[RMDB]
Background
This 177-nucleotide RNA was probed chemically with 2A3 and DMS. The 2A3 profile rests on 5,053 reads. The RNA was probed in 150 mM KOAc, 10 mM MgCl2 and 150 mM bicine (pH 8.5) at 24 C. It was measured as part of the RMDB library OK1LIB. The DMS profile rests on 3,831 reads.
RNA sequence: GGGAACGACUCGAGUAGAGUCGAAAAGAAUGUGUGUAAACCGUGUGGCACACAAUGGCUAUUCAGGAAUCGUUCUGAGGCAACAGGUAAAAUGGAAGAAAGCCAAAUCCUUAGCAAACGGAAGAAAAUGGAUAUGCUGAUUCGUCAGCAUAUCCAUAAAAGAAACAACAACAACAAC
Reactivity to 2A3 in 0.01 (KOAc 150mM, MgCl2 10mM, bicine 150mM(pH8.5), 24C), signal-to-noise 4, nucleotides 027 to 126: g140a030a100u100g040u000g000u020g020u090a070a110a070c000c010g040u050g010u040g160g020c000a000c000a000c030a000a050u080g030g000c030u050a130u120u020c020a020g060g090a050a140u090c040g110u060u000c040u040g040a010g040g040c040a080a010c010a070g030g000u070a090a080a000a000u150g060g030a080a020g080a080a110a010g040c020c000a010a050a000u040c000c000u030u080a020g010c060a050a010a050c010g020g030a010a070g030a030a130a000
Reactivity to DMS in 0.01 (KOAc 150mM, MgCl2 10mM, bicine 150mM(pH8.5), 24C), signal-to-noise 3, nucleotides 027 to 126: g000a080a130u000g030u000g010u000g050u030a090a120a080c040c030g050u010g010u000g010g010c010a000c030a050c000a050a180u000g010g000c000u000a060u000u000c000a050g030g000a110a060u020c090g010u020u010c020u000g010a080g010g010c120a040a100c090a030g000g020u000a020a030a070a060u040g000g020a070a150g000a110a130a060g010c010c010a010a050a030u030c000c000u000u020a080g020c060a020a070a080c020g000g000a070a090g010a120a030a060